[RMDB]
RNA sequence: GGGAACGACUCGAGUAGAGUCGAAAAGAAGAAAUAAAUAAUAAAUAAAGCAGACGGUACUCAGUCUGCAAAGAACCAUGAGAAAAGAAAGAAAGAAAAGAAAAGAAAGAAAAGAAAUCGUGAGUUCGCUCAUGAAAAAGAAACAACAACAACAAC
Reactivity to 2A3 in 0.01 (KOAc 150mM, MgCl2 10mM, bicine 150mM(pH8.5), 24C), signal-to-noise 1, nucleotides 027 to 135: g040a040a000g030a060a150a030u180a080a020a060u220a050a030u080a240a140a030u230a140a250a000g030c000a000g010a010c010g020g040u040a040c000u010c080a040g000u000c000u000g030c020a000a000a000g000a000a000c020c020a010u180g030a030g110a010a150a000a060g060a070a050a010g060a020a030a040g020a000a070a000a000g040a050a100a010a010g080a110a050a030g040a000a130a070a010g070a000a090a000u010c050g030u000g040a040g020u020u040c150g000c050u030c030a030u060g000a130a060